[RMDB]
RNA sequence: GGGAACGACUCGAGUAGAGUCGAAAAAUUGAGGUUGGUAAAUCCCAACCCUGAUACAAGCCAGAUAGCAUAAAUGAGGAGCAUUCAUGCCCUGUCUGAAGAGGUCAGAGGCUACUCAGCUCUGCUAAUGUAGAAACGAAUUCGUUCGUUUCUACAUAAAAGAAACAACAACAACAAC
Reactivity to 2A3 in 0.01 (KOAc 150mM, MgCl2 10mM, bicine 150mM(pH8.5), 24C), signal-to-noise 8, nucleotides 027 to 126: a000u060u060g020a060g010g000u000u010g000g020u070a080a100a140u120c010c000c000a000a000c000c000c010u000g020a010u050a150c070a070a060g080c020c020a060g060a160u110a020g010c020a020u050a140a140a040u090g020a030g020g010a010g010c030a060u070u110c030a040u110g000c000c000c000u030g040u040c090u110g110a140a070g070a050g100g020u020c010a010g050a060g060g000c010u010a020c020u020c030a020g000c020u010c010u030g000c010u050a070
Reactivity to DMS in 0.01 (KOAc 150mM, MgCl2 10mM, bicine 150mM(pH8.5), 24C), signal-to-noise 9, nucleotides 027 to 126: a050u000u000g010a070g000g010u000u000g000g000u000a080a120a170u010c300c000c000a020a020c010c010c000u000g000a040u000a080c200a090a150g010c040c030a120g010a210u000a010g010c010a020u000a030a060a130u000g000a040g000g000a040g000c020a040u000u000c060a120u000g000c060c020c010u000g010u010c180u000g010a100a100g010a090g000g010u000c030a030g010a070g000g000c010u000a030c010u000c020a030g000c170u010c130u000g000c020u000a030

This 177-nucleotide RNA was probed chemically with 2A3 and DMS. It was measured as part of the RMDB library OK2TST. The reactions ran in a buffer of 150 mM KOAc, 10 mM MgCl2 and 150 mM bicine (pH 8.5), at 24 C. For 2A3 the reverse transcriptase was SuperScript II with manganese.